[RMDB]
RNA sequence: GGGAACGACUCGAGUAGAGUCGAAAAGAGGAAUGUCUUGUCUUCAUCCGGUUGCCUGCGCCACUGUUCUGGUGGCGUCUGGCACUGGUGCAAGACAGAGCUGUGCUUCCCCGAGAGUGUGCUAAGCACUACAUGUAGGAUUCGUCCUACAUGUAGUAAAAGAAACAACAACAACAAC
Reactivity to 2A3 in 0.01 (KOAc 150mM, MgCl2 10mM, bicine 150mM(pH8.5), 24C), signal-to-noise 9, nucleotides 027 to 126: g130a020g030g090a130a080u070g030u040c020u040u030g010u010c030u090u080c080a090u080c020c010g020g000u160u160g000c000c000u010g000c000g020c010c000a020c000u080g170u300u180c160u300g040g000u000g000g000c000g000u010c010u000g000g000c000a000c000u000g000g000u010g010c050a010a000g000a000c010a000g020a000g010c020u040g030u090g090c010u020u020c000c000c000c010g040a060g000a020g100u080g010u030g050c040u080a080a020g040c030
Reactivity to DMS in 0.01 (KOAc 150mM, MgCl2 10mM, bicine 150mM(pH8.5), 24C), signal-to-noise 9, nucleotides 027 to 126: g000a080g000g010a100a080u010g000u000c010u010u010g010u000c060u010u010c060a070u020c000c000g010g010u010u020g020c000c000u000g000c000g000c000c000a010c000u000g010u020u030c230u040g010g020u000g000g000c000g010u010c060u000g010g010c000a010c000u000g000g010u000g000c130a020a010g000a010c000a020g000a070g010c050u000g010u010g010c080u000u000c020c000c000c070g010a090g000a080g010u000g010u000g010c050u010a100a120g010c150

Notes
The record gives the reactivity of an RNA of 177 nucleotides to 2A3 and DMS. The reactions ran in a buffer of 150 mM KOAc, 10 mM MgCl2 and 150 mM bicine (pH 8.5), at 24 C. For 2A3 the reverse transcriptase was SuperScript II with manganese. Source: RMDB libraries RFM100 and RFMREP, as collected in RNAgym.